[RMDB]
RNA sequence: GGGAACGACUCGAGUAGAGUCGAAAAUCUACCUUGAUCUAGUCAAAGCCCUCAUAUACUUAAAUUAGGUUUGGCUUUGUGGAGCUAGCCACCUUAUAACCGGCCUAGUUAAGACAACUCACUUGGGCUCCAUGCAGAUAUUCGUAUCUGCAUGGAGAAAAGAAACAACAACAACAAC
Reactivity to 2A3 in 0.01 (KOAc 150mM, MgCl2 10mM, bicine 150mM(pH8.5), 24C), signal-to-noise 2, nucleotides 027 to 126: u030c010u030a070c020c020u050u130g050a120u050c010u050a040g080u070c050a070a120a070g010c030c060c000u020c070a040u160a040u070a220c010u020u090a050a150a250u120u000a010g010g000u020u070u230g020g030c000u090u040u010g040u040g010g050a060g080c050u030a020g090c040c010a030c020c020u070u140a120u040a190a050c030c040g020g060c000c020u000a000g000u010u040a000a020g010a060c030a070a020c040u080c090a100c040u030u010g030g120g000
Reactivity to DMS in 0.01 (KOAc 150mM, MgCl2 10mM, bicine 150mM(pH8.5), 24C), signal-to-noise 2, nucleotides 027 to 126: u000c040u010a080c070c040u010u000g010a090u000c040u000a050g000u000c090a090a130a130g000c010c010c020u010c160a120u020a130u000a130c030u000u000a030a030a050u000u000a020g000g030u000u000u000g090g000c050u000u020u010g010u030g010g020a170g000c050u000a090g010c020c020a040c020c300u000u000a090u020a040a140c040c020g000g000c020c000u000a000g010u000u000a040a040g000a150c190a050a060c110u000c090a060c140u000u000g010g040g000